Chemical mapping of a 177-nucleotide RNA with DMS and 2A3. Values cover nucleotides 27 to 126. The RNA was probed in 150 mM KOAc, 10 mM MgCl2 and 150 mM bicine (pH 8.5) at 24 C. The data come from the RNA Mapping Database (RMDB), libraries RFM100 and RFMREP. For 2A3 the reverse transcriptase was SuperScript II with manganese.

[RMDB]
RNA sequence: GGGAACGACUCGAGUAGAGUCGAAAACCCCACAGCUCCUGGGCCGCAGCUGUUCUCACGGCAGCAGCUGUGGCAUUCCUCUGUGGGAGAGAAACUGUUACACGAUUGAAACCGCUUUCUUAGCAAAGAGUAAAAAACGUUUCGACGUUUUUUACUCAAAAGAAACAACAACAACAAC
Reactivity to DMS in 0.01 (KOAc 150mM, MgCl2 10mM, bicine 150mM(pH8.5), 24C), signal-to-noise 3, nucleotides 027 to 126: c050c010c000c030a020c010a030g020c160u010c060c030u010g000g000g000c000c000g000c000a020g000c020u020g010u000u000c030u030c090a100c170g000g020c210a060g030c000a030g020c010u000g040u010g000g000c020a010u010u010c030c030u010c010u010g020u000g010g020g000a070g000a080g030a090a070a060c060u020g000u020u030a060c080a100c200g000a080u000u000g000a040a080a070c080c030g010c090u000u000u010c030u000u010a110g010c150a080a050a160
Reactivity to 2A3 in 0.01 (KOAc 150mM, MgCl2 10mM, bicine 150mM(pH8.5), 24C), signal-to-noise 6, nucleotides 027 to 126: c010c000c000c000a010c000a000g020c020u040c030c040u100g000g040g000c000c000g000c000a000g000c000u010g010u080u010c060u040c050a130c070g130g030c060a010g010c000a000g000c000u000g000u010g000g000c000a000u000u010c000c010u030c020u030g040u060g020g020g010a040g000a000g020a020a080a010c050u080g030u150u140a050c090a020c080g110a170u140u220g080a110a040a030c040c010g010c040u030u070u000c030u040u100a020g040c060a060a100a060